[RMDB]
RNA sequence: GGGAACGACUCGAGUAGAGUCGAAAAGAUAUGGAUGAUAUCCUCUCCUCUUGGAUUUAUGGAGAAUGUAGUGUCGGAAACGACAUAUUAUAGCUCCAUUGUCAGAGGGAGGAUAUCAUCCUAAGUCGAAUACUUCACUCUUCGGAGUGAAGUAUUCAAAAGAAACAACAACAACAAC
Reactivity to DMS in 0.01 (KOAc 150mM, MgCl2 10mM, bicine 150mM(pH8.5), 24C), signal-to-noise 2, nucleotides 027 to 126: g010a090u000a300u000g020g010a000u000g010a020u000a000u000c010c010u000c000u000c010c000u000c010u000u010g050g000a010u020u000u000a000u000g010g010a010g000a110a140u000g000u010a080g010u000g000u010c000g030g000a160a120a300c000g020a000c000a020u010a040u010u000a040u010a100g000c000u000c010c000a020u000u000g010u000c010a020g000a030g020g010g000a030g000g000a000u000a000u010c000a010u000c000c000u010a010a060g010u010c110
Reactivity to 2A3 in 0.01 (KOAc 150mM, MgCl2 10mM, bicine 150mM(pH8.5), 24C), signal-to-noise 2, nucleotides 027 to 126: g110a050u120a010u220g000g000a000u020g000a000u000a040u000c000c030u000c180u260c000c000u010c070u190u300g300g000a110u300u300u160a040u110g030g020a010g010a130a110u150g040u140a110g110u000g010u000c000g000g060a090a060a080c000g030a010c010a010u130a170u050u110a050u030a030g090c000u000c000c000a010u000u020g020u060c000a020g000a000g020g000g020a000g000g000a000u000a000u030c010a000u040c000c000u000a020a000g010u010c020